[RMDB]
RNA sequence: GGGAACGACUCGAGUAGAGUCGAAAACUUAAGCCUAAAAGGAUGGACCUCAUGGCUGACGGGCCGGCAGGGUUUCGCUGGAAACGGCGGAGCCUCCCUUUCGGAAAGGAGAUAUUUGCAUUUUGAGCCCUGCUUAAUAUUUCGAUAUUAAGCAGGGAAAAGAAACAACAACAACAAC
Reactivity to 2A3 in 0.01 (KOAc 150mM, MgCl2 10mM, bicine 150mM(pH8.5), 24C), signal-to-noise 9, nucleotides 027 to 126: c020u070u100a060a020g010c000c010u040a040a030a010a010g080g040a120u270g100g100a180c000c010u020c010a020u060g020g000c000u000g010a030c060g000g030g020c030c020g040g020c080a070g030g000g000u010u000u010c000g000c010u000g010g000a020a010a010c000g000g000c000g000g000a000g000c000c000u040c000c000c000u020u050u060c060g050g060a080a040a040g100g040a060g050a040u080a090u120u150u140g080c090a100u040u060u050u160g080a070g010
Reactivity to DMS in 0.01 (KOAc 150mM, MgCl2 10mM, bicine 150mM(pH8.5), 24C), signal-to-noise 9, nucleotides 027 to 126: c050u010u010a070a040g020c000c000u000a020a050a110a040g000g010a300u020g010g010a170c010c000u000c020a070u010g000g000c020u000g000a130c210g000g010g000c040c060g010g020c090a060g000g010g010u000u000u000c000g010c010u000g000g000a030a030a080c010g010g010c000g000g000a010g000c010c010u000c030c010c020u000u000u010c080g010g000a090a060a060g000g000a070g000a090u020a080u010u000u000g000c070a110u010u000u010u010g010a200g010